The record gives the reactivity of an RNA of 177 nucleotides to 2A3 and DMS. For 2A3, 7,966 sequencing reads were counted. DMS (dimethyl sulfate) methylates the pairing face of unpaired adenines and cytosines. The DMS profile rests on 6,309 reads. Reactivities are given for positions 27 through 126.
[RMDB]
RNA sequence: GGGAACGACUCGAGUAGAGUCGAAAAUGGACGUUGUUCGCAACGUCCACAUACUGAGACGUACGUUAAACGUAUCGCGGGCAUAAGUGCAGUUAGAAUAAGUACCUAUUGAGUUCGCUCAAUAGAACCAAGUACUACAGUUCGCUGUAGUACUUGGAAAAGAAACAACAACAACAAC
Reactivity to 2A3 in 0.01 (KOAc 150mM, MgCl2 10mM, bicine 150mM(pH8.5), 24C), signal-to-noise 6, nucleotides 027 to 126: u050g000g000a010c000g000u010u000g010u070u070c170g000c110a000a000c010g010u010c000c000a000c000a000u060a000c000u090g050a010g030a070c040g030u020a000c010g030u050u210a170a170a030c020g020u020a020u160c050g000c030g010g050g000c030a060u050a250a000g060u060g050c010a020g020u060u110a070g070a150a090u190a290a020g050u050a060c010c000u000a020u000u010g000a000g020u010u170c260g020c090u000c000a000a010u010a010g000a010a010
Reactivity to DMS in 0.01 (KOAc 150mM, MgCl2 10mM, bicine 150mM(pH8.5), 24C), signal-to-noise 5, nucleotides 027 to 126: u000g000g010a010c000g000u010u000g000u010u010c230g020c010a010a010c000g010u000c000c000a010c080a060u000a080c070u010g000a090g020a110c050g000u000a010c040g020u000u010a040a070a200c030g000u000a030u000c070g010c050g010g020g010c040a050u010a070a060g020u000g020c020a060g020u000u000a100g010a110a080u000a040a050g010u010a080c130c000u000a010u000u000g000a020g020u000u020c190g010c000u000c000a010a010u000a020g010a090a190